[RMDB]
Description:
An RNA of 177 nucleotides, treated with 2A3 and DMS and read out base by base. Source: RMDB library OK2TRN, as collected in RNAgym. The reactions ran in a buffer of 150 mM KOAc, 10 mM MgCl2 and 150 mM bicine (pH 8.5), at 24 C. For 2A3, 953 sequencing reads were counted. The DMS profile rests on 996 reads.

RNA sequence: GGGAACGACUCGAGUAGAGUCGAAAAUCAGCUACAGGCAGCUCAAGCGGGUGCGCGGUCACCUACAGGCAGCUCAAACGGGUGCCCAGUCACCUACAGGCAGCUCAAACGGGUGCCCGGUCACCUAGUAAUUACCUGACUUCGGUCAGGUAAUUACAAAAGAAACAACAACAACAAC
Reactivity to 2A3 in 0.01 (KOAc 150mM, MgCl2 10mM, bicine 150mM(pH8.5), 24C), signal-to-noise 1, nucleotides 027 to 126: u090c020a040g020c010u070a040c080a170g040g110c000a020g030c010u060c060a150a030g060c170g040g040g020u030g000c100g000c020g030g050u030c010a000c020c000u050a040c050a020g000g060c010a020g000c040u040c100a140a160a070c140g010g060g000u040g040c090c120c000a060g110u190c010a000c010c000u050a070c070a060g050g010c010a010g010c030u050c100a140a090a030c100g010g010g000u010g020c030c010c000g040g040u040c000a000c020c020u000a000
Reactivity to DMS in 0.01 (KOAc 150mM, MgCl2 10mM, bicine 150mM(pH8.5), 24C), signal-to-noise 2, nucleotides 027 to 126: u000c090a080g000c060u000a080c130a070g010g020c090a050g000c060u000c220a070a120g010c070g000g000g030u000g000c080g000c030g000g010u000c000a030c010c040u030a130c240a140g010g010c000a060g000c020u000c080a050a100a130c150g000g010g020u000g010c030c080c110a140g020u000c000a040c030c010u000a060c170a180g010g030c020a050g000c000u030c030a000a110a160c260g020g000g000u000g000c050c000c000g080g000u000c030a020c010c000u000a090